[RMDB]
RNA sequence: GGGAACGACUCGAGUAGAGUCGAAAAGAUAUGGACCCAUGGUCGAGCGAUAAGUCGGUGUCGGAAACGACACUCGACUUUUGACGCUCGACAUGGGUCCUAAGUCAAAGGCGCGUUCGCGCGCCAAGAAAGUGGUAUAGUUCGCUAUACCACUUUCAAAAGAAACAACAACAACAAC
Reactivity to 2A3 in 0.01 (KOAc 150mM, MgCl2 10mM, bicine 150mM(pH8.5), 24C), signal-to-noise 3, nucleotides 027 to 126: g030a030u090a050u180g010g000a000c010c030c040a030u110g290g250u120c000g000a000g020c020g040a070u020a130a010g010u010c010g000g000u020g010u010c010g010g030a070a070a060c010g000a000c010a010c000u010c010g000a010c010u010u000u000u010g010a030c030g000c010u000c000g000a000c000a000u010g000g010g010u000c000c000u000a010a000g010u000c020a030a020a070g000g000c000g000c010g030u040u050c090g030c010g000c000g000c170c000a010a010
Reactivity to DMS in 0.01 (KOAc 150mM, MgCl2 10mM, bicine 150mM(pH8.5), 24C), signal-to-noise 7, nucleotides 027 to 126: g010a050u000a300u010g000g000a010c000c000c010a010u010g010g030u010c000g000a020g020c000g040a150u000a020a010g030u000c000g020g010u000g010u010c010g000g000a110a110a260c000g020a030c000a000c010u020c010g010a010c000u000u000u000u000g010a250c090g010c000u000c000g010a020c010a000u000g000g010g010u000c000c000u000a000a060g010u010c030a100a140a170g010g020c000g020c000g020u000u010c240g020c020g050c000g010c000c000a050a090

Conditions: 150 mM KOAc, 10 mM MgCl2 and 150 mM bicine (pH 8.5), 24 C. An RNA of 177 nucleotides, treated with 2A3 and DMS and read out base by base. The DMS profile rests on 12,019 reads. It was measured as part of the RMDB library TTRDES. For 2A3 the reverse transcriptase was SuperScript II with manganese.